[RMDB]
RNA sequence: GGGAACGACUCGAGUAGAGUCGAAAAGGCCAGUGUUUCGGGGCCGGCCCUGACAAGCAGCCCGAGGAGGGCCUCGAACGACUCAAACCUGGACUUCUGCGAUUGUCGCUUCCUUUUCCUGCCUCUGUUAACCCUUUACAUUCGUGUAAAGGGUUAAAAAAGAAACAACAACAACAAC
Reactivity to 2A3 in 0.01 (KOAc 150mM, MgCl2 10mM, bicine 150mM(pH8.5), 24C), signal-to-noise 7, nucleotides 027 to 126: g030g000c020c020a030g020u020g030u080u060u040c020g000g000g000g020c000c000g070g010c000c000c010u030g070a060c050a120a070g080c040a030g030c020c020c030g020a060g030g040a050g040g020g000c000c000u000c000g020a030a010c040g120a060c030u020c090a050a070a090c000c010u040g030g000a030c000u110u040c010u100g030c010g110a140u060u090g030u050c010g020c100u010u030c010c000u030u030u020u040c010c020u040g040c000c010u030c010u020g030
Reactivity to DMS in 0.01 (KOAc 150mM, MgCl2 10mM, bicine 150mM(pH8.5), 24C), signal-to-noise 9, nucleotides 027 to 126: g000g010c130c060a060g010u010g000u000u000u000c010g020g000g000g000c000c010g010g000c030c010c030u010g010a110c150a110a100g010c100a110g010c050c040c040g010a090g000g000a110g010g000g010c000c000u000c020g000a040a060c080g010a060c070u010c110a050a140a230c030c010u000g010g010a030c020u010u020c020u000g010c030g000a270u010u020g010u000c010g000c120u000u000c000c000u000u000u000u000c020c000u000g000c070c040u010c050u000g010